[RMDB]
RNA sequence: GGGAACGACUCGAGUAGAGUCGAAAAAAAACAUCAUAGACCUGUACCGGGAAUUUCGUCUCAACGCCAGAUAUUCAGGUCCCGGCGCUGACAUCCCGGCGGCCGGGAUGCGCAUGUCCGGGGAGGCUAGUGUAUUCAAAUUCGUUUGAAUACACUAAAAAGAAACAACAACAACAAC
Reactivity to DMS in 0.01 (KOAc 150mM, MgCl2 10mM, bicine 150mM(pH8.5), 24C), signal-to-noise 5, nucleotides 027 to 126: a040a020a030a050c070a060u000c070a110u000a130g000a090c020c020u000g010u000a090c040c020g000g000g010a120a080u010u000u000c080g010u000c050u000c080a080a070c140g000c040c030a070g000a060u010a040u000u000c090a110g010g000u000c010c010c010g000g000c050g020c070u010g000a090c090a060u010c040c040c000g000g010c100g000g010c050c000g010g000g000a000u000g010c210g010c100a040u000g010u010c010c010g020g000g010g010a040g000g010c060
Reactivity to 2A3 in 0.01 (KOAc 150mM, MgCl2 10mM, bicine 150mM(pH8.5), 24C), signal-to-noise 2, nucleotides 027 to 126: a000a000a000a000c080a080u170c030a070u070a090g110a140c000c000u040g080u100a040c050c070g000g060g070a030a060u200u140u130c070g050u030c030u000c100a060a150c060g060c030c000a020g000a080u040a040u160u150c030a030g070g000u020c000c010c000g000g000c040g030c030u020g010a050c000a070u040c030c030c000g030g020c030g050g010c050c030g020g000g020a000u010g000c010g010c010a040u070g020u020c000c020g000g000g000g000a010g000g030c040